[RMDB]
RNA sequence: GGGAACGACUCGAGUAGAGUCGAAAAGCCUGGUAGAAUUUGAUUCAGGUAGAGACUGUAGGAGCCAAGAUAAGGUGCAUAUGCUGGGAACACAAGCCCUUAAAUAAUGGCAGAGUAGUGACGUUUAUCCCCCAAGGGCUUUACAUACAUUAUGGUCCGAGAGGACCAAGUUCGCUUGGUCCUCUCGAAAAGAAACAACAACAACAAC
Reactivity to DMS in 0.01 (KOAc 150mM, MgCl2 10mM, bicine 150mM(pH8.5), 24C), signal-to-noise 1, nucleotides 027 to 156: g000c020c010u000g020g000u000a090g000a160a130u020u020u000g000a170u010u020c060a030g060g000u010a130g020a300g000a060c020u000g070u000a110g000g020a120g000c020c030a110a120g030a160u000a050a050g030g020u000g010c030a110u000a030u010g010c050u050g010g000g010a080a060c070a070c120a100a090g010c000c000c000u000u000a020a050a110u010a060a050u040g000g000c020a060g010a130g000u000a080g010u000g000a050c050g020u010u000u010a090u040c040c020c010c010c050a060a100g020g010g010c020u000u010u000a080c070a150u000a040c050a090u000u000a120u000g010g020u000c030
Reactivity to 2A3 in 0.01 (KOAc 150mM, MgCl2 10mM, bicine 150mM(pH8.5), 24C), signal-to-noise 1, nucleotides 027 to 156: g040c000c000u000g070g000u110a180g060a300a210u140u050u260g060a110u140u130c060a040g000g010u050a020g010a000g000a050c010u050g100u100a000g020g020a020g040c020c020a010a000g000a050u050a010a090g010g000u040g030c000a020u090a020u220g060c080u070g000g060g000a110a000c090a000c010a130a000g000c000c000c000u000u030a110a080a050u190a040a120u060g060g000c010a000g050a040g000u150a020g060u030g090a050c050g000u000u150u050a190u160c020c000c000c010c000a020a110g000g000g000c000u030u050u060a000c000a020u050a000c000a010u030u060a060u210g000g000u020c000
The data come from the RNA Mapping Database (RMDB), library OK3TST. Structure probing data (DMS and 2A3) for a 207-nucleotide construct. Values are in units of 0.01, from 0 to 300, in steps of 10. The RNA was probed in 150 mM KOAc, 10 mM MgCl2 and 150 mM bicine (pH 8.5) at 24 C. DMS (dimethyl sulfate) methylates the pairing face of unpaired adenines and cytosines.